[RMDB]
RNA sequence: GGGAACGACUCGAGUAGAGUCGAAAAGAUAUGGACAGAGGCUAGAAGCAGGUCGGAAACGACCUGACCUUCUUGGACCCUCGUCCUAAGUCAAACAGUAGGGUAAUGUUCGCAUUACCCUACUGAACCUCCAAACAAUGUUCGCAUUGUUUGGAGGAAAAGAAACAACAACAACAAC
Reactivity to DMS in 0.01 (KOAc 150mM, MgCl2 10mM, bicine 150mM(pH8.5), 24C), signal-to-noise 3, nucleotides 027 to 126: g000a020u000a290u000g000g010a010c020a090g020a000g020g010c010u000a030g000a020a000g000c000a020g000g020u000c000g010g000a080a070a170c000g010a020c000c000u000g000a030c240c010u000u000c000u010u010g020g010a120c300c010c010u000c050g000u000c000c000u000a040a090g000u010c010a150a110a270c000a010g000u000a000g010g000g010u010a010a000u000g000u000u030c270g030c000a020u000u000a000c000c000c000u000a000c010u000g000a040a080
Reactivity to 2A3 in 0.01 (KOAc 150mM, MgCl2 10mM, bicine 150mM(pH8.5), 24C), signal-to-noise 2, nucleotides 027 to 126: g000a020u080a040u170g030g000a000c180a190g030a090g040g000c020u040a000g000a030a000g010c000a010g000g000u000c000g010g030a050a060a020c000g000a000c000c000u000g010a030c000c000u010u010c020u040u060g040g120a150c000c010c020u000c000g000u030c000c000u030a090a030g100u040c030a060a100a100c010a080g000u000a010g010g010g020u010a010a020u010g020u110u120c210g000c070a000u000u010a000c000c000c010u000a000c000u010g000a000a000